[RMDB]
RNA sequence: GGGAACGACUCGAGUAGAGUCGAAAACGACCGACGGGGCGACGGAUUGGGGUGGCUCGGCGGGGUUCUGGACGUCCCCGUGAUGGAGCGCGGCCCGGAGACCAGGCAAAUCCGGUCUCCAGGAGGGCAACGGGACACAAUUCGUUGUGUCCCGUUGAAAAGAAACAACAACAACAAC
Reactivity to DMS in 0.01 (KOAc 150mM, MgCl2 10mM, bicine 150mM(pH8.5), 24C), signal-to-noise 3, nucleotides 027 to 126: c110g000a110c060c030g020a070c130g000g000g010g010c050g000a100c050g000g000a130u020u010g010g010g000g030u000g000g000c050u020c050g000g040c020g000g000g000g020u010u010c050u010g010g010a130c120g010u030c000c010c000c000g010u010g000a110u030g000g000a050g000c020g000c080g000g000c010c020c030g010g010a020g000a010c000c000a100g010g020c220a090a100a220u050c030c020g000g000u000c000u010c000c000a060g010g000a120g000g000g000
Reactivity to 2A3 in 0.01 (KOAc 150mM, MgCl2 10mM, bicine 150mM(pH8.5), 24C), signal-to-noise 3, nucleotides 027 to 126: c050g090a050c010c020g020a030c030g000g000g000g030c040g030a060c050g020g020a040u080u120g030g000g020g030u060g060g000c020u010c020g020g000c000g010g010g000g000u090u060c050u100g060g090a070c070g010u020c000c000c000c000g000u050g030a130u120g030g030a040g010c020g000c020g010g010c000c010c010g000g000a010g010a000c020c150a120g000g030c040a070a040a000u140c040c010g000g000u000c000u040c000c000a030g080g030a030g010g010g000
Overview: Structure probing data (DMS and 2A3) for a 177-nucleotide construct. Values are in units of 0.01, from 0 to 300, in steps of 10. For DMS the reverse transcriptase was MarathonRT. For 2A3 the reverse transcriptase was SuperScript II with manganese.